[RMDB]
Chemical mapping of a 177-nucleotide RNA with DMS. It was measured as part of the RMDB library TTRDEL.
RNA sequence: GGGAACGACUCGAGUAGAGUCGAAAAGAUAUGGAGCCCAGAGGGAGCUGUAUCGGAAACGAUGACAGCUUUGAUCUCUGGCUCCUAAGUCAAAACAAGGCGCAAUGGUUCGCCAUUGCGCCUUGAACGUAAAAUCACUGUUCGCAGUGAUUUUACGAAAAGAAACAACAACAACAAC
Reactivity to DMS in 0.01 (KOAc 150mM, MgCl2 10mM, bicine 150mM(pH8.5), 24C), signal-to-noise 3, nucleotides 027 to 126: g000a010u000a300u010g000g000a010g000c190c050c040a010g010a020g010g010g000a010g010c000u010g000u000a020u000c000g010g010a090a090a110c010g000a010u010g010a010c000a000g000c000u000u010u010g010a090u010c010u000c000u000g000g010c000u000c000c010u000a000a060g010u010c030a080a070a130a240c000a010a010g000g010c000g000c010a000a010u000g000g010u000u010c220g030c000c010a000u000u000g010c020g000c000c000u000u000g010a040a100